Structure probing data (DMS) for a 177-nucleotide construct. For DMS, 831 sequencing reads were counted.
[RMDB]
RNA sequence: GGGAACGACUCGAGUAGAGUCGAAAAUAGGCGCAAGUUGACUUUGAACCUAAACAGGAAACAUCGCCCACUCCCUGCGCAACCUGAUUGUUGAGACACAACCCGGAUCUAGAUGCAUGGGACAGAGGCCCGAUGAUUAUUUCGAUAAUCAUCGGGCAAAAGAAACAACAACAACAAC
Reactivity to DMS in 0.01 (KOAc 150mM, MgCl2 10mM, bicine 150mM(pH8.5), 24C), signal-to-noise 2, nucleotides 027 to 126: u000a090g010g040c290g030c070a120a050g030u000u000g000a120c110u010u000u010g020a200a080c070c010u030a030a140a140c190a110g000g010a050a040a150c060a060u000c140g040c010c000c060a150c050u000c000c000c000u000g000c030g020c040a080a060c060c020u000g010a100u010u010g000u000u010g010a060g000a180c200a070c030a070a130c020c060c030g000g000a070u010c070u020a060g000a080u000g000c040a060u020g000g000g010a050c220a090g010a150g000
DMS (dimethyl sulfate) methylates the pairing face of unpaired adenines and cytosines. The reactions ran in a buffer of 150 mM KOAc, 10 mM MgCl2 and 150 mM bicine (pH 8.5), at 24 C.